[RMDB]
RNA sequence: GGGAACGACUCGAGUAGAGUCGAAAAAGUCAGUGGUCCGACUUACGAGUCGGACCACUGAAAUGGCAGCUGGAUCCAGCCAGGCGGUGUAUCGCCAAACCCAGCCAAUCAAUCUACCCACCGGGAAUACAGAAAGCGAACUUCGGUUCGCUUUCAACGUUAACUGAUACUUCGGUAUCAGUUAACGAAAAGAAACAACAACAACAAC
Reactivity to 2A3 in 0.01 (KOAc 150mM, MgCl2 10mM, bicine 150mM(pH8.5), 24C), signal-to-noise 1, nucleotides 027 to 156: a000g030u000c000a000g020u000g000g050u030c020c080g030a050c050u110u080a080c290g080a020g000u000c000g000g040a000c000c000a010c000u000g000a000a000a010u000g000g040c000a000g030c010u030g010g040a080u110c140c050a000g060c000c030a050g020g000c020g020g030u260g100u220a230u290c010g000c000c000a050a010a030c020c000c000a000g030c010c010a030a060u190c020a030a090u010c050u200a100c000c010c010a080c170c030g060g100g030a040a050u170a170c070a100g030a010a010a000g020c000g000a010a000c000u090u060c130g100g000u000u010c000g010c000u010u000u000c010a010a000